[RMDB]
RNA sequence: GGGAACGACUCGAGUAGAGUCGAAAAGAUAUGGACCCAGAAGGGAGCGAUUUCGGAAACGAACUCGCAUCGAUCUUCGGGUCCUAAGUCAAAUCUUGUACUAAAAGUUCGCUUUUAGUACAAGAAACACGUGUCUAAAGUUCGCUUUAGACACGUGAAAAGAAACAACAACAACAAC
Reactivity to DMS in 0.01 (KOAc 150mM, MgCl2 10mM, bicine 150mM(pH8.5), 24C), signal-to-noise 3, nucleotides 027 to 126: g010a020u000a300u010g010g000a010c010c000c000a120g040a010a010g000g000g020a030g020c000g000a020u000u000u000c010g000g000a080a090a120c010g000a020a010c100u000c010g020c010a190u000c150g010a090u010c000u000u000c000g000g000g010u000c000c000u010a010a060g000u000c030a120a090a100u000c000u000u000g000u000a000c000u000a000a000a010a010g040u000u010c240g010c000u000u000u000u000a010g000u000a010c000a000a000g000a030a080a150
Reactivity to 2A3 in 0.01 (KOAc 150mM, MgCl2 10mM, bicine 150mM(pH8.5), 24C), signal-to-noise 2, nucleotides 027 to 126: g010a000u060a040u130g010g000a010c010c030c110a130g010a000a000g020g000g010a010g030c020g000a010u020u010u010c010g030g010a060a060a040c020g000a000a000c020u010c020g010c020a120u290c020g090a110u010c000u000u010c010g010g010g010u000c000c000u010a080a020g010u020c020a010a000a230u010c000u000u000g000u010a000c000u000a010a000a010a010g040u080u160c240g080c130u000u000u000u000a000g000u000a020c000a000a000g000a000a000a000